[RMDB]
An RNA of 177 nucleotides, treated with DMS and read out base by base. Conditions: 150 mM KOAc, 10 mM MgCl2 and 150 mM bicine (pH 8.5), 24 C. Values cover nucleotides 27 to 126. DMS (dimethyl sulfate) methylates the pairing face of unpaired adenines and cytosines.
RNA sequence: GGGAACGACUCGAGUAGAGUCGAAAAGUUCCGUCGUACGUUUUGAAAAACGAGCCAGGGAGUGUGCCUGUUUGACGAGUCUAACCGGAGUAUCCGGGAAGGCGUAGGGAAACCAAUAUGGCCGCAGCUCACUGUGACUGUUCGCAGUCACAGUGAGAAAAGAAACAACAACAACAAC
Reactivity to DMS in 0.01 (KOAc 150mM, MgCl2 10mM, bicine 150mM(pH8.5), 24C), signal-to-noise 1, nucleotides 027 to 126: g020u000u000c000c000g030u000c060g020u000a210c040g020u000u010u020u000g000a090a060a110a060a090c060g000a300g070c140c130a060g000g000g070a180g070u020g030u010g000c000c000u010g020u000u000u000g010a120c030g000a080g000u000c000u010a050a300c000c000g000g000a300g020u010a070u020c010c010g010g010g040a170a020g000g000c030g020u000a150g000g000g000a050a150a020c080c160a010a110u000a030u000g000g000c030c000g030c130a030g000